Structure probing data (2A3 and DMS) for a 177-nucleotide construct. It was measured as part of the RMDB library OK2TST. For 2A3 the reverse transcriptase was SuperScript II with manganese. Conditions: 150 mM KOAc, 10 mM MgCl2 and 150 mM bicine (pH 8.5), 24 C.
[RMDB]
RNA sequence: GGGAACGACUCGAGUAGAGUCGAAAACAGAAUCUCCUCGCCUCUGCCCCCAGGGCCCCUUCUGAGACAAAGAGGAUGCUCUAGGGUCUGGGGGGGGAUCAGGCUGCUCACCCCCAGUGUGAAAUAAUAUCUCACACUAAUUCGUUAGUGUGAGAUAAAAAGAAACAACAACAACAAC
Reactivity to 2A3 in 0.01 (KOAc 150mM, MgCl2 10mM, bicine 150mM(pH8.5), 24C), signal-to-noise 2, nucleotides 027 to 126: c000a040g040a100a080u060c020u040c030c000u010c000g230c010c000u070c060u060g030c010c010c000c000c010a000g030g010g030c030c000c000c000u120u020c030u030g100a110g030a070c040a020a120a000g070a040g030g000a010u060g000c000u010c000u020a010g000g000g000u000c010u000g000g000g000g000g000g000g000g000a010u090c040a030g060g000c000u010g010c030u030c040a090c020c030c000c000c010a040g070u080g010u020g120a130a030a020u250a030a030
Reactivity to DMS in 0.01 (KOAc 150mM, MgCl2 10mM, bicine 150mM(pH8.5), 24C), signal-to-noise 6, nucleotides 027 to 126: c040a070g000a090a070u010c070u010c010c010u000c050g010c020c020u000c030u000g000c080c000c000c000c010a050g010g000g010c010c140c030c030u000u000c060u010g000a150g010a210c190a090a100a080g000a070g000g010a100u000g010c020u000c010u000a060g000g000g010u000c010u010g010g000g000g000g010g000g000g000a030u000c080a030g010g010c020u000g000c040u010c080a280c060c020c010c020c030a090g000u010g020u000g000a100a090a070u000a060a130

2A3 is a SHAPE reagent: it acylates the 2'-hydroxyl of flexible nucleotides of all four kinds.